[RMDB]
RNA sequence: GGGAACGACUCGAGUAGAGUCGAAAAACGAGCAGUACGCUGCUCGAAAUAGGCGAUGAUUUGACUCCGGAAAAGCUGAGCGAUGAUGAAGUCCAGCCCGAAUGAGCACAUACCAUACGUGGUAUGAGUUUCGGCAUAAUUUCGAUUAUGCCGAAACAAAAGAAACAACAACAACAAC
Reactivity to DMS in 0.01 (KOAc 150mM, MgCl2 10mM, bicine 150mM(pH8.5), 24C), signal-to-noise 3, nucleotides 027 to 126: a110c010g000a020g000c010a000g030u010a080c280g110c010u000g000c020u000c000g000a030a050a060u060a100g010g020c010g000a130u020g000a110u000u010u010g000a150c020u000c020c030g030g010a140a040a130a130g000c030u020g000a090g020c030g000a100u000g000a090u020g000a120a080g000u010c030c060a100g000c000c010c020g000a070a160u030g010a040g020c090a150c020a020u000a010c000c000a040u010a070c130g020u000g000g040u000a000u000g000a110
Reactivity to 2A3 in 0.01 (KOAc 150mM, MgCl2 10mM, bicine 150mM(pH8.5), 24C), signal-to-noise 6, nucleotides 027 to 126: a000c010g010a000g000c000a000g010u100a020c240g030c090u010g000c000u000c010g030a030a030a020u130a020g010g000c050g050a060u060g030a050u100u030u140g060a110c010u010c020c020g040g030a120a130a020a020g030c030u040g030a010g040c030g040a060u110g010a060u080g070a110a010g030u020c020c020a010g010c010c020c010g060a070a090u200g030a090g030c050a010c000a070u010a010c000c000a010u020a080c240g090u030g000g000u000a010u000g020a020